Conditions: 150 mM KOAc, 10 mM MgCl2 and 150 mM bicine (pH 8.5), 24 C. The record gives the reactivity of an RNA of 207 nucleotides to 2A3. For 2A3 the reverse transcriptase was SuperScript II with manganese. The 2A3 profile rests on 1,553 reads.
RNA sequence: GGGAACGACUCGAGUAGAGUCGAAAAGGGAUAAGAGAGUACUCUUAUCCCCACGUCGUUGGUGACAACGACGAUUAUCCGGUGGCCACCCGCCCAGGCCACCGUUACUCCACUCCACUCCUUCGGGACUGGUUUGGAGGAACAUAACAGGGCCAAAAUCACGAUCAGUAUUCGUACUGAUCGUGAUAAAAGAAACAACAACAACAAC
Reactivity to 2A3 in 0.01 (KOAc 150mM, MgCl2 10mM, bicine 150mM(pH8.5), 24C), signal-to-noise 2, nucleotides 027 to 156: g010g000g000a000u010a020a010g000a000g030a040g190u270a220c010u000c000u010u000a000u000c000c000c000c020a040c020g000u000c000g000u000u010g000g070u080g040a040c020a010a000c040g010a000c010g000a010u100u090a040u120c040c000g030g010u000g000g020c000c030a110c030c100c070g020c000c000c000a010g000g010c000c000a000c000c000g000u010u060a010c010u020c000c010a000c000u010c000c000a000c010u000c000c000u020u070c220g030g000g010a010c000u010g010g000u000u000u000g000g000a010g000g030a010a020c080a020u230a120a070c080a110g000g010g000c020c010a100a150a000
Description
As a SHAPE reagent, 2A3 marks flexible, mostly unpaired nucleotides at the ribose 2'-OH.